Conditions: 150 mM KOAc, 10 mM MgCl2 and 150 mM bicine (pH 8.5), 24 C.
Structure probing data (DMS and 2A3) for a 177-nucleotide construct.
2A3 adducts were read by reverse transcription with SuperScript II with manganese.
DMS adducts were read by reverse transcription with MarathonRT.
It was measured as part of the RMDB library OK2TST.
The 2A3 profile rests on 6,837 reads.
RNA sequence: GGGAACGACUCGAGUAGAGUCGAAAAGAGCAGUGCGCGACAGCGCAGUGAGCAGCCAAUUGUGGACUUGACAGAAGUCUCAAACCGGACUGCCACUGGCGCGCCUUCGGCCACGGCUGGGGCAGCACCACCAGUGAGAAUUCGUUCUCACUGGUGGAAAAGAAACAACAACAACAAC
Reactivity to DMS in 0.01 (KOAc 150mM, MgCl2 10mM, bicine 150mM(pH8.5), 24C), signal-to-noise 6, nucleotides 027 to 126: g020a090g010c070a060g010u000g000c070g010c030g010a080c300a170g010c040g010c010a010g010u000g000a130g020c000a020g010c010c010a100a110u000u010g030u020g030g010a000c010u000u000g010a160c300a150g000a040a010g010u000c000u010c000a010a030a120c290c190g020g000a080c010u000g000c000c000a020c010u000g020g020c020g010c030g000c080c060u010u010c040g000g000c040c030a050c170g030g010c010u020g010g000g000g000c090a080g000c110a120
Reactivity to 2A3 in 0.01 (KOAc 150mM, MgCl2 10mM, bicine 150mM(pH8.5), 24C), signal-to-noise 4, nucleotides 027 to 126: g050a010g020c070a020g030u030g050c050g000c030g060a040c060a050g020c030g000c040a000g010u000g000a090g000c000a000g000c000c000a090a170u030u030g090u200g030g000a010c000u010u050g050a130c080a190g300a170a000g010u000c000u000c000a040a060a090c100c080g110g070a250c020u000g000c000c000a000c000u010g080g020c000g000c010g020c000c000u130u140c020g030g000c000c020a030c080g040g000c010u030g000g000g000g010c020a040g010c020a030